[RMDB]
RNA sequence: GGGAACGACUCGAGUAGAGUCGAAAAGAGUGGAACCUUGGUCUUUUAUUGGGGGGUACACUCGAGGAGUGGAAGGCGGGGAGGCGGGGUUCCCGGGCUUACCUACGGGAACUGCUGGUUUCCCCUUAUAGGGUUUGCUUCGGCAAACCCAAAAGAAACAACAACAACAAC
Reactivity to DMS in 0.01 (KOAc 150mM, MgCl2 10mM, bicine 150mM(pH8.5), 24C), signal-to-noise 2, nucleotides 027 to 129: g020a040g000u000g060g000a260a110c000c000u030u030g030g030u080c070u060u060u040u020a120u150u110g000g000g000g000g000g000u020a080c070a050c050u020c020g000a110g040g030a090g000u050g090g000a060a130g020g000c120g040g000g000g000a050g000g070c120g020g010g020g000u000u070c000c000c000g000g000g020c130u030u060a040c210c110u070a040c070g030g000g020a030a100c040u020g020c140u040g020g020u010u000u110c000c010c030c060u070u000a110u070a120